[RMDB]
RNA sequence: GGGAACGACUCGAGUAGAGUCGAAAAUCGAAGUAUCAUUACGCUGUGCAGAUCGACCUGACACCAGACACAAAGGAGAAUAGGGGCAGCAUGAGUUCCGUCGGCGACUCAUUCCGACCUUCCACAGAAAUAUGGAGUACUUCGGUACUCCAUAUUUAAAAGAAACAACAACAACAAC
Reactivity to 2A3 in 0.01 (KOAc 150mM, MgCl2 10mM, bicine 150mM(pH8.5), 24C), signal-to-noise 9, nucleotides 027 to 126: u100c020g040a100a010g090u130a040u130c040a080u110u160a050c080g000c060u040g020u050g060c030a020g020a130u050c020g060a070c020c010u030g020a030c020a040c030c030a030g060a080c030a010c030a100a150a030g080g010a080g050a100a090u140a110g010g000g020g020c020a030g000c020a040u050g020a010g020u060u040c030c020g050u060c050g090g010c030g040a030c010u000c020a050u060u030c020c020g030a040c040c020u060u040c030c020a090c010a080g140
Reactivity to DMS in 0.01 (KOAc 150mM, MgCl2 10mM, bicine 150mM(pH8.5), 24C), signal-to-noise 8, nucleotides 027 to 126: u010c060g010a090a100g010u000a060u020c060a100u020u010a070c110g020c030u000g020u010g010c070a060g000a070u010c040g010a100c030c020u000g000a070c080a080c060c030a070g000a090c130a070c120a040a080a100g000g020a090g000a070a080u010a100g010g010g000g010c070a060g020c080a050u010g010a060g000u000u010c060c040g030u010c040g020g000c090g000a030c040u020c050a080u010u010c050c030g000a100c050c040u000u000c010c020a070c150a090g000

Structure probing data (2A3 and DMS) for a 177-nucleotide construct. In probing experiments dimethyl sulfate is read out at A N1 and C N3, which are open when not base-paired. The reactions ran in a buffer of 150 mM KOAc, 10 mM MgCl2 and 150 mM bicine (pH 8.5), at 24 C.